[RMDB]
RNA sequence: GGGAACGACUCGAGUAGAGUCGAAAAGCUCUGGAAUUGAGGCCGCUCUAACAAUAAUCCAAAACUACUUCGCAGAGUAAUCUGCCGAAUCGUAGGAUGCCCAUUACUAUCUAUUUUUGGAGCAUCUAAAACUGUCAGUGCUUCGGCACUGACAGAACUGAAUUUGAGGGUUCGCCCUCAAAUUCAGAAAAGAAACAACAACAACAAC
Reactivity to 2A3 in 0.01 (KOAc 150mM, MgCl2 10mM, bicine 150mM(pH8.5), 24C), signal-to-noise 1, nucleotides 027 to 156: g030c000u000c030u030g000g060a090a070u000u060g000a020g000g040c030c000g020c020u010c030u090a070a060c040a060a140u180a080a060u080c020c040a010a000a020a080c020u020a010c000u010u000c000g000c000a000g020a000g030u110a170a080u000c000u010g120c110c040g010a000a010u070c030g000u010a050g020g000a000u010g010c010c000c000a010u030u050a060c030u030a000u190c020u050a220u090u120u000u020u000g020g000a190g010c010a000u000c000u070a000a000a050a260c010u000g020u020c000a010g000u010g000c020u000u060c110g090g000c000a000c000u000g000a000c000a000g000a000a060